The record gives the reactivity of an RNA of 177 nucleotides to DMS and 2A3. The 2A3 profile rests on 752 reads. For 2A3 the reverse transcriptase was SuperScript II with manganese. For DMS the reverse transcriptase was MarathonRT. Source: RMDB library OK2TST, as collected in RNAgym. The reactions ran in a buffer of 150 mM KOAc, 10 mM MgCl2 and 150 mM bicine (pH 8.5), at 24 C.

[RMDB]
RNA sequence: GGGAACGACUCGAGUAGAGUCGAAAAGGAUAAAGAGGAGAGCUUUUUCUCUAAAACGCGCUCGACCUCACGAAUCACAUCCGGAGAAGUGCGAUCCAUUGUGGCAAUACGACGCGCCACAUCCGACCUUUCGGUGAGGAUUCGUCCUCACCGAAAGAAAAGAAACAACAACAACAAC
Reactivity to DMS in 0.01 (KOAc 150mM, MgCl2 10mM, bicine 150mM(pH8.5), 24C), signal-to-noise 1, nucleotides 027 to 126: g050g000a170u000a080a210a130g000a100g010g000a300g000a090g030c170u000u000u000u000u000c090u010c080u010a060a020a060a130c190g010c070g010c010u000c020g000a050c020c030u000c060a100c100g020a040a010u000c090a120c160a300u000c020c100g030g000a020g000a050a060g030u000g000c000g000a020u000c060c080a020u000u000g000u000g000g000c020a110a050u030a120c220g000a110c290g010c240g000c010c000a030c000a010u000c110c040g010a060c240
Reactivity to 2A3 in 0.01 (KOAc 150mM, MgCl2 10mM, bicine 150mM(pH8.5), 24C), signal-to-noise 1, nucleotides 027 to 126: g000g020a020u080a090a110a010g010a020g030g020a020g000a020g010c000u280u180u030u130u000c020u050c050u020a020a020a020a120c040g050c020g030c010u000c040g170a300c000c010u050c000a070c020g030a000a040u060c080a000c010a130u000c010c070g080g000a010g000a010a100g110u040g070c010g040a030u050c000c040a050u010u110g000u000g000g000c000a060a000u060a300c180g070a060c080g140c040g000c130c000a010c000a000u020c010c020g060a040c000